RNA sequence: GGGAACGACUCGAGUAGAGUCGAAAAUCGGAUUUUGAGUUUGCAAUGUCUCAAGAAGAAGUGGAUGACUUCCGGAACGACAUUAAAAGGGAAUCGACGAUGCAGGGCAACAAGUAUGCAGAUUUACCCAUAGGGAGGAUUUCGAUCCUCCCUAUGGAAAAGAAACAACAACAACAAC
Reactivity to 2A3 in 0.01 (KOAc 150mM, MgCl2 10mM, bicine 150mM(pH8.5), 24C), signal-to-noise 3, nucleotides 027 to 126: u040c010g050g030a020u020u040u090u150g110a110g050u020u110u110g020c050a060a000u070g020u040c010u030c080a040a050g050a030a000g000a030a000g030u050g080g190a170u180g040a080c000u010u010c000c010g040g020a070a040c040g040a010c020a040u070u100a040a050a050a070g090g040g030a030a040u040c030g030a030c030g010a030u060g010c040a010g020g000g060c010a040a030c000a080a070g070u090a050u130g000c030a020g010a090u050u030u100a100c030
Reactivity to DMS in 0.01 (KOAc 150mM, MgCl2 10mM, bicine 150mM(pH8.5), 24C), signal-to-noise 5, nucleotides 027 to 126: u000c050g020g010a150u000u010u010u010g010a080g010u010u010u000g020c200a060a050u000g010u000c020u010c080a090a120g000a160a070g010a040a050g020u000g010g010a120u010g000a110c020u010u000c020c090g000g000a080a140c180g000a050c040a020u000u010a020a080a090a080g010g000g010a040a050u000c050g010a080c100g020a050u000g000c030a040g000g000g000c050a030a050c090a050a060g010u000a050u030g020c070a070g000a140u000u000u010a100c150
Structure probing data (2A3 and DMS) for a 177-nucleotide construct. For DMS the reverse transcriptase was MarathonRT. The reactions ran in a buffer of 150 mM KOAc, 10 mM MgCl2 and 150 mM bicine (pH 8.5), at 24 C.